[RMDB]
RNA sequence: GGGAACGACUCGAGUAGAGUCGAAAAGAUAUGGAUAACUCGGUCGCGAGCGUUAUAUCGGAAACGAUAUUGCGCGAUGAGCGACCGAGGUUAUCCUAAGUCAAACAUGGUGCUUCGGCACCAUGAACUACUCCUUAAACUUCGGUUUAAGGAGUAGAAAAGAAACAACAACAACAAC
Reactivity to DMS in 0.01 (KOAc 150mM, MgCl2 10mM, bicine 150mM(pH8.5), 24C), signal-to-noise 7, nucleotides 027 to 126: g010a050u000a300u010g000g010a020u000a010a030c000u000c000g000g010u000c010g030c000g000a200g010c010g020u000u000a010u000a000u000c000g010g000a150a100a240c000g010a010u000a010u000u000g010c000g020c010g000a110u010g020a280g010c000g010a010c000c000g000a000g010g000u010u000a000u000c000c000u000a020a110g010u000c030a140a130a300c010a010u000g000g020u000g010c000u000u020c230g030g010c000a010c000c000a000u000g010a070a240
Reactivity to 2A3 in 0.01 (KOAc 150mM, MgCl2 10mM, bicine 150mM(pH8.5), 24C), signal-to-noise 3, nucleotides 027 to 126: g030a020u120a040u170g000g000a000u010a010a000c000u010c020g000g010u000c010g020c030g050a030g010c010g010u010u030a000u000a000u010c010g010g010a060a050a020c010g000a000u000a010u010u040g000c020g010c040g070a270u210g090a060g010c000g000a000c000c000g000a000g000g000u000u000a000u010c000c000u010a060a010g050u030c040a080a080a120c010a020u010g020g000u010g000c020u120u110c300g200g000c020a000c020c010a000u000g000a000a000